[RMDB]
RNA sequence: GGGAACGACUCGAGUAGAGUCGAAAAGAAAUCAGGAGUCCACCUGCGGCUGACUGAUUGGGCCUGAGCUCCUCGGGCAAGGUGCUUCAGUUAGAACCCUGGGACAGCAAGCCUGGGGGGAGGCCCGGAGCACACAGAGGGAAAGGGACCAGCCCAAGUCCGGUAUUUAGUUCGCUAAAUACCGGACAAAAGAAACAACAACAACAAC
Reactivity to 2A3 in 0.01 (KOAc 150mM, MgCl2 10mM, bicine 150mM(pH8.5), 24C), signal-to-noise 1, nucleotides 027 to 156: g020a010a060a000u100c060a000g050g000a050g060u030c000c010a080c070c210u100g060c200g010g020c070u030g060a160c010u010g050a080u090u160g000g000g000c010c000u080g020a080g100c030u050c020c000u070c000g000g120g000c100a100a070g130g000u020g010c020u030u050c030a020g010u030u120a080g020a250a060c000c010c010u020g040g010g040a030c020a070g070c070a150a050g000c000c000u010g000g000g000g000g000g000a000g010g000c030c030c070g040g000a020g000c000a000c000a020c010a060g060a100g000g030g040a070a060a060g030g060g010a060c020c030a000g050c050c030c010a010a020